Description: Conditions: 150 mM KOAc, 10 mM MgCl2 and 150 mM bicine (pH 8.5), 24 C. The record gives the reactivity of an RNA of 207 nucleotides to 2A3. For 2A3, 592 sequencing reads were counted. Values cover nucleotides 27 to 156. 2A3 is a SHAPE reagent: it acylates the 2'-hydroxyl of flexible nucleotides of all four kinds.
RNA sequence: GGGAACGACUCGAGUAGAGUCGAAAAAGCGCAGACCAGGCAAGGGGUCAGGGGUGUAUGCCCCCUGCUGCCAUGGCCACUCCUCCAUAGGUGCUGGUGCUUCGAGAAGGCCAAAGUGCACCCCUGCUGAGUGCCCACGUCAACAUGCCUGGGAGCGAGCUGAAAUGGGAUUCGUCCCAUUUCAGCUAAAAGAAACAACAACAACAAC
Reactivity to 2A3 in 0.01 (KOAc 150mM, MgCl2 10mM, bicine 150mM(pH8.5), 24C), signal-to-noise 1, nucleotides 027 to 156: a010g130c100g020c030a090g030a200c000c000a010g000g000c000a020a170g040g000g000g000u050c000a000g000g020g020g010u040g040u040a030u300g060c030c000c000c000c000u020g010c010u090g050c000c000a090u060g000g000c010c040a030c040u050c020c000u140c060c040a090u110a170g000g100u070g060c160u010g050g000u150g070c050u030u060c140g240a200g110a130a010g010g000c000c040a070a050a000g070u040g000c000a000c000c010c010c020u010g000c100u060g070a000g010u120g000c040c010c000a200c040g130u100c030a000a030c030a160u070g030c000c000u020g000g000g000a000g020c010g000